The record gives the reactivity of an RNA of 207 nucleotides to 2A3 and DMS.
It was measured as part of the RMDB library OK3TST.
Conditions: 150 mM KOAc, 10 mM MgCl2 and 150 mM bicine (pH 8.5), 24 C.
For DMS the reverse transcriptase was MarathonRT.
For 2A3 the reverse transcriptase was SuperScript II with manganese.
For DMS, 4,729 sequencing reads were counted.
RNA sequence: GGGAACGACUCGAGUAGAGUCGAAAAUUGAUGAAUUCCACCCCAAGUAGUGGAAGAAACACACCUACAACAUGAGCAGAGAAGAUUUUUCUUCUGUACUUUCCAGGACUUGAAGCUGCUUUGUUUUUUGGUCGCUGGGUGGGGAAGGAGGAACAAACGUAAAUAAUUACUUCGGUAAUUAUUUACGAAAAGAAACAACAACAACAAC
Reactivity to 2A3 in 0.01 (KOAc 150mM, MgCl2 10mM, bicine 150mM(pH8.5), 24C), signal-to-noise 3, nucleotides 027 to 156: u100u110g030a030u070g010a040a110u060u000c010c010a010c010c030c010c060a120a020g050u090a020g030u070g040g030a080a010g030a030a110a000c070a000c010a020c040c020u140a080c050a130a010c010a130u140g040a030g040c060a030g020a010g010a160a040g020a090u080u120u060u150u030c010u040u000c010u040g020u050a050c020u070u130u060c030c040a030g040g040a070c020u060u070g040a030a020g020c020u060g030c000u160u120u060g070u040u090u030u000u100u050g030g000u000c010g000c140u010g010g040g030u220g010g030g000g040a010a060g030g040a060g030g030a070a020c090a080a040a010
Reactivity to DMS in 0.01 (KOAc 150mM, MgCl2 10mM, bicine 150mM(pH8.5), 24C), signal-to-noise 2, nucleotides 027 to 156: u010u000g010a170u000g010a160a250u010u000c000c000a150c000c000c040c110a130a210g030u000a040g040u010g000g010a030a090g000a070a090a090c080a100c050a100c050c010u000a110c040a090a110c060a130u010g010a080g000c010a070g000a080g010a020a030g010a040u000u000u000u010u010c010u000u000c010u000g010u000a030c050u000u010u010c060c030a090g020g000a040c040u000u000g020a050a140g010c010u000g010c050u000u000u000g020u010u000u000u020u000u000g020g010u000c040g050c040u010g020g000g010u000g000g000g040g010a090a080g010g010a120g010g000a070a090c080a060a040a190